[RMDB]
RNA sequence: GGGAACGACUCGAGUAGAGUCGAAAAAGGAGUGCUAACAGUGACUUUUGGUACGCUGUGUAUAUGCAGAAAAAGAUAUUAGACACCAAUUAAGCCGGGACGAAAGCCUAAUUGGAUUGCUUUCGUCCCACGCGAAUGGCUUCGGCCAUUCGCGUGGAAAAGAAACAACAACAACAAC
Reactivity to DMS in 0.01 (KOAc 150mM, MgCl2 10mM, bicine 150mM(pH8.5), 24C), signal-to-noise 4, nucleotides 027 to 126: a070g010g000a120g020u020g020c040u010a070a100c200a050g020u000g010a110c020u010u010u010u010g010g020u030a110c210g020c000u000g010u010g010u050a070u030a100u030g000c020a050g000a020a050a040a110a060g000a130u010a060u020u010a040g000a120c050a070c020c010a060a070u020u020a050a100g000c040c070g000g000g010a020c020g000a000a000a010g010c020c190u020a090a130u010u030g030g010a190u030u020g030c020u000u000u000c000g000u000c000
Reactivity to 2A3 in 0.01 (KOAc 150mM, MgCl2 10mM, bicine 150mM(pH8.5), 24C), signal-to-noise 4, nucleotides 027 to 126: a000g130g010a080g030u060g010c000u010a030a000c010a000g010u010g050a030c020u070u080u110u140g100g010u050a120c020g010c000u010g030u000g080u090a060u000a040u300g030c020a010g230a040a050a020a000a000g140a020u080a030u070u060a110g010a050c010a010c030c010a040a060u100u030a020a050g030c020c000g000g020g020a000c020g000a000a010a000g000c020c130u230a230a210u080u110g110g060a140u080u110g000c000u000u010u000c000g000u010c010
Chemical mapping of a 177-nucleotide RNA with DMS and 2A3. Source: RMDB libraries RFM100 and RFMREP, as collected in RNAgym.